Record summary: The record gives the reactivity of an RNA of 177 nucleotides to DMS and 2A3. Source: RMDB library OK1LIB, as collected in RNAgym. 2A3 adducts were read by reverse transcription with SuperScript II with manganese. Conditions: 150 mM KOAc, 10 mM MgCl2 and 150 mM bicine (pH 8.5), 24 C.
RNA sequence: GGGAACGACUCGAGUAGAGUCGAAAAGAUCGCUCGUCCAGGUGGGGUGAGUGACCCCCGAUGGUCUCUCGCGGUGCGAGGGCACCGCAUCGGUACCGCUUUCGGGUUGGCGGUCCUAAGCGGUGUGGCGCGUAUGAUCGUUCGCGAUCGUACGCGCAAAAGAAACAACAACAACAAC
Reactivity to DMS in 0.01 (KOAc 150mM, MgCl2 10mM, bicine 150mM(pH8.5), 24C), signal-to-noise 2, nucleotides 027 to 126: g010a160u010c010g020c000u000c000g010u000c030c020a300g020g040u030g000g000g060g010u010g000a030g030u000g000a010c050c030c000c020c000g030a110u010g010g000u030c000u000c000u000c010g040c000g000g010u030g010c000g030a030g020g030g020c020a020c010c000g010c000a050u000c230g000g000u040a030c020c000g000c000u010u000u040c070g000g000g000u010u010g000g000c000g000g010u000c000c000u020a100a120g000c000g010g010u010g040u000g000
Reactivity to 2A3 in 0.01 (KOAc 150mM, MgCl2 10mM, bicine 150mM(pH8.5), 24C), signal-to-noise 3, nucleotides 027 to 126: g030a150u040c000g000c010u010c000g040u020c010c010a030g110g090u210g070g130g020g010u040g010a030g040u040g030a010c000c000c000c000c000g060a100u130g020g070u000c000u000c000u000c010g000c020g130g170u190g020c030g040a050g020g050g000c000a010c010c000g010c010a010u090c040g000g010u060a040c000c000g000c020u010u060u090c060g080g010g000u060u050g010g000c010g000g000u000c000c000u040a060a000g000c000g000g000u010g000u030g060